The data come from the RNA Mapping Database (RMDB), library M2RFPK. This 207-nucleotide RNA was probed chemically with 2A3.
[RMDB]
RNA sequence: GGGAACGACUCGAGUAGAGUCGAAAAACGAGUCCGUACGCGGACUCGAAGGGCCCCAGAAGACCAAGGGGCCCAAACCUACCACUCAUUAGAUGCAUGGAAAUCACUAGGUGAUGCGUCACCUAGAACACGCUUUUAAGCUUCGGCUUAAAAGCAAGUUCUAGGCGUGGUUCGCCACGCCUAGAACAAAAGAAACAACAACAACAAC
Reactivity to 2A3 in 0.01 (KOAc 150mM, MgCl2 10mM, bicine 150mM(pH8.5), 24C), signal-to-noise 2, nucleotides 027 to 156: a000c000g000a000g000u000c020c000g000u010a020c240g020c070g140g010a000c010u000c000g000a010a040g020g010g000c000c010c000c000a120g120a300a050g070a100c040c110a080a170g000g010g000g020c010c000c020a010a000a000c000c000u000a050c010c030a030c040u100c020a070u080u250a020g080a150u090g020c120a070u100g170g000a100a120a010u170c090a080c060u000a010g000g000u000g000a000u040g010c100g040u010c000a000c000c000u000a000g030a030a030c110a000c040g010c000u000u020u000u000a020a000g000c000u010u090c240g050g000c000u010u000a000a000a000a000g010c000a010a000
The RNA was probed in 150 mM KOAc, 10 mM MgCl2 and 150 mM bicine (pH 8.5) at 24 C.